The record gives the reactivity of an RNA of 207 nucleotides to DMS and 2A3. It was measured as part of the RMDB library OK3TST. The reactions ran in a buffer of 150 mM KOAc, 10 mM MgCl2 and 150 mM bicine (pH 8.5), at 24 C. DMS (dimethyl sulfate) methylates the pairing face of unpaired adenines and cytosines.
[RMDB]
RNA sequence: GGGAACGACUCGAGUAGAGUCGAAAAUCGAGAGCUGGAAGUAUGCUCCCCUUUCCGCUUUCCCCAACUAUGGUCCCUUCUAUAUUUAUGGACAAUGUGUCGCUACUUUCACUUCUGGUUACAGCCCUCUCGUUGAGCCUGCCUUCACCUUUGCAAACACUAUAUGGGCAUUCGUGCCCAUAUAGUGAAAAGAAACAACAACAACAAC
Reactivity to DMS in 0.01 (KOAc 150mM, MgCl2 10mM, bicine 150mM(pH8.5), 24C), signal-to-noise 2, nucleotides 027 to 156: u000c050g010a090g020a030g030c030u000g000g000a130a100g020u000a070u010g010c000u000c020c000c000c010u000u000u010c010c020g010c060u000u000u010c010c010c010c070a100a090c100u010a050u010g010g000u010c000c010c030u000u010c070u000a130u000a140u000u000u000a120u010g010g010a030c040a080a110u010g000u000g010u000c040g020c030u000a080c060u000u010u010c030a080c060u000u010c010u000g010g040u000u010a100c080a150g000c040c020c010u000c040u010c030g030u000u000g010a080g010c030c020u010g020c020c020u030u000c050a050c040c020u000u010u010g010c030a090a080a130
Reactivity to 2A3 in 0.01 (KOAc 150mM, MgCl2 10mM, bicine 150mM(pH8.5), 24C), signal-to-noise 2, nucleotides 027 to 156: u140c000g010a020g020a000g060c050u060g000g030a010a020g050u170a070u300g100c040u080c020c000c000c060u000u030u010c030c020g040c040u040u050u020c020c000c000c010a110a000c060u080a070u210g050g020u030c010c020c030u120u040c100u060a130u020a130u170u210u030a050u140g000g000a020c020a100a060u110g030u050g020u090c030g030c050u040a060c080u090u090u070c070a070c080u140u080c030u100g070g000u090u060a090c030a020g020c000c000c000u030c020u000c000g020u000u000g000a020g030c000c010u000g020c020c020u070u100c060a160c050c010u010u050u110g000c030a070a050a000
The DMS profile rests on 4,640 reads.